[RMDB]
About this RNA
The record gives the reactivity of an RNA of 207 nucleotides to 2A3. 2A3 adducts were read by reverse transcription with SuperScript II with manganese.

RNA sequence: GGGAACGACUCGAGUAGAGUCGAAAAAUCGCGCCUGGUCGGAACAUAACGACGGCGGGCCGGUGGGGAAUCAGGGGGCUACCGUGGGAUAGCGAUGAGACAGCCCCUCCGAUGGCACCAAGCGGCGCACACUGGCCAUACUUCGGUAUGGCCAGAAGUGUACAUCGGUAUUCGUACCGAUGUACACAAAAGAAACAACAACAACAAC
Reactivity to 2A3 in 0.01 (KOAc 150mM, MgCl2 10mM, bicine 150mM(pH8.5), 24C), signal-to-noise 1, nucleotides 027 to 156: a020u040c010g000c000g000c000c010u110g140g000u010c030g000g070a210a240c030a300u240a040a020c040g030a000c000g120g050c070g000g000g020c010c000g010g000u110g020g040g010g030a020a140u130c060a070g140g050g000g000g000c000u040a040c000c000g150u100g000g110g020a070u090a200g030c000g070a040u000g010a000g020a060c040a010g000c010c020c000c000u000c010c000g050a060u060g000g000c000a030c120c000a070a020g080c020g020g000c050g040c010a070c000a000c010u000g010g000c000c000a010u000a010c000u000u030c030g050g000u000a000u000g000g010c050c000a000g000a010a000